Structure probing data (2A3) for a 207-nucleotide construct. Source: RMDB library M2RFPK, as collected in RNAgym. For 2A3 the reverse transcriptase was SuperScript II with manganese. The reactions ran in a buffer of 150 mM KOAc, 10 mM MgCl2 and 150 mM bicine (pH 8.5), at 24 C. For 2A3, 856 sequencing reads were counted.
RNA sequence: GGGAACGACUCGAGUAGAGUCGAAAAGGUGCUCUGAAUGGAGUGCUCUACUGAGAUUAUAAAAUAGAAGGUAAGCUAUUAUCUCUUACAACAGGGCAGGGCUUGAUGGAAUAGGCGGUAAAGUCUAAAAACUACCUCACCUUCGGGUGAGGUAGAAGACCAAAUAUGCGUUCGCGCAUAUUUGGUCAAAAGAAACAACAACAACAAC
Reactivity to 2A3 in 0.01 (KOAc 150mM, MgCl2 10mM, bicine 150mM(pH8.5), 24C), signal-to-noise 2, nucleotides 027 to 156: g070g000u020g020c000u010c030u020g150a110a120u210g040g020a030g030u040g020c020u030c050u070a080c040u070g000a020g010a030u060u070a090u220a180a110a050a030u100a040g020a060a060g090g010u180a000a070g050c010u010a040u110u040a060u120c020u000c020u080u060a110c030a130a070c020a080g000g050g000c010a020g060g000g000c000u010u070g030a010u020g040g020a040a020u050a080g090g000c040g080g000u050a030a060a000g020u010c030u030a000a000a080a080a040c000u000a000c000c000u000c000a000c000c000u100u150c300g110g010g010u000g000a000g000g000u000a000g000a000a010